[RMDB]
RNA sequence: GGGAACGACUCGAGUAGAGUCGAAAAAGAGCCGGAUACGUCCGGCUCAACGGGGGAUACGUGUGGUGCCGUCCGCUCCCCCUAUGGCAUAACAAAUGCACCACACACUAGGCUACGGCCUUGUGAAAAAAGGUGUAUGUGUUCGCACAUACACCAAGAUCAUUCACAAGUUCGCUUGUGAAUGAUCAAAAGAAACAACAACAACAAC
Reactivity to 2A3 in 0.01 (KOAc 150mM, MgCl2 10mM, bicine 150mM(pH8.5), 24C), signal-to-noise 4, nucleotides 027 to 156: a010g010a000g000c020c000g000g010a020u040a040c180g090u010c000c000g000g020c000u000c000a000a000c000g000g000g000g000g010a010u050a160c030g020u030g000u000g020g010u000g000c020c020g050u040c020c060g050c070u040c000c010c010c000c010u030a120u180g100g000c080a090u110a200a030c050a100a080a030u130g000c000a000c000c000a000c000a000c000a000c000u060a000g000g010c000u020a010c260g110g000c000c000u000u010g030u020g110a110a040a020a020a030a020g000g000u000g000u000a010u000g010u000g030u040u070c180g030c090a000c000a000u000a000c000a000c000c000a000a000
Source: RMDB library M2RFPK, as collected in RNAgym. Chemical mapping of a 207-nucleotide RNA with 2A3. For 2A3, 3,897 sequencing reads were counted. 2A3 adducts were read by reverse transcription with SuperScript II with manganese.